[RMDB]
RNA sequence: GGGAACGACUCGAGUAGAGUCGAAAAACGCGAACCCGUAAGUGGAACCCUGAUCCUUUAUUGGGGGGUACACUCGAGGAGUGGAAGGCGCUGCCCGGGGGGAACCGGAUUUACCUACGGGAAUCCCAGACCGUAGCCUUCGGGCUACGGAAAAGAAACAACAACAACAAC
Reactivity to 2A3 in 0.01 (KOAc 150mM, MgCl2 10mM, bicine 150mM(pH8.5), 24C), signal-to-noise 5, nucleotides 027 to 129: a000c090g000c000g020a040a030c010c010c000g020u090a040a020g000u010g050g030a110a090c010c010c000u030g080a090u100c050c030u110u230u170a100u140u100g020g000g000g020g020g010u020a010c010a020c000u010c040g060a130g060g010a050g010u090g030g090a080a050g110g010c010g000c080u050g010c020c000c000g040g000g000g010g000g000a010a030c040c020g000g010a000u080u040u090a080c000c000u010a040c040g020g000g000a020a050u040c010c000c010a000g060a020
Reactivity to DMS in 0.01 (KOAc 150mM, MgCl2 10mM, bicine 150mM(pH8.5), 24C), signal-to-noise 4, nucleotides 027 to 129: a100c100g020c000g000a110a080c030c000c030g070u060a060a040g000u010g040g010a130a200c080c030c010u000g010a050u040c170c100u070u110u080a090u100u040g040g000g010g000g040g020u050a170c030a020c090u000c030g050a110g040g010a090g100u000g000g020a070a050g000g000c110g000c110u000g010c000c000c040g000g000g000g000g000g000a140a040c080c110g010g010a030u080u050u020a150c160c030u040a070c060g000g030g010a100a110u030c000c000c030a120g000a070